[RMDB]
RNA sequence: GGGAACGACUCGAGUAGAGUCGAAAACUUGAGCUCGUCGGUCCGAAAAUAGUGGCCCGUGAACGAGAUCCGCUCACCGCUCCACAGCUGGCGGAUCAGUACGAUGGCCUCGAUCAGCCGGUCGUGGCGUGGUAAAAGUGUUCGCACUUUUACCACGAAAAGAAACAACAACAACAAC
Reactivity to DMS in 0.01 (KOAc 150mM, MgCl2 10mM, bicine 150mM(pH8.5), 24C), signal-to-noise 5, nucleotides 027 to 126: c040u010u020g010a090g010c020u000c010g010u000c010g000g000u000c020c020g040a070a080a080a120u030a120g040u020g000g000c050c020c040g000u010g010a100a040c040g020a180g000a020u000c010c010g000c010u030c080a090c120c130g000c030u010c090c130a070c110a090g000c110u000g000g000c020g000g010a000u000c010a080g000u010a050c060g010a120u030g000g020c030c000u010c060g000a100u000c040a110g010c050c020g010g010u000c030g000u020g000g020
Reactivity to 2A3 in 0.01 (KOAc 150mM, MgCl2 10mM, bicine 150mM(pH8.5), 24C), signal-to-noise 9, nucleotides 027 to 126: c020u050u120g040a020g040c010u010c030g030u010c010g030g020u040c040c050g080a060a070a020a070u240a060g060u100g020g000c000c020c000g010u050g100a070a020c020g030a050g010a230u010c010c010g010c040u110c040a100c040c110g030c040u050c100c060a080c020a050g000c010u020g010g000c010g000g000a010u000c000a010g030u080a020c040g060a140u220g050g010c000c000u010c010g010a060u050c010a010g030c010c030g060g020u140c040g050u080g040g000
This 177-nucleotide RNA was probed chemically with DMS and 2A3.
For DMS, 12,312 sequencing reads were counted.
The data come from the RNA Mapping Database (RMDB), library OK1LIB.
Reactivities are given for positions 27 through 126.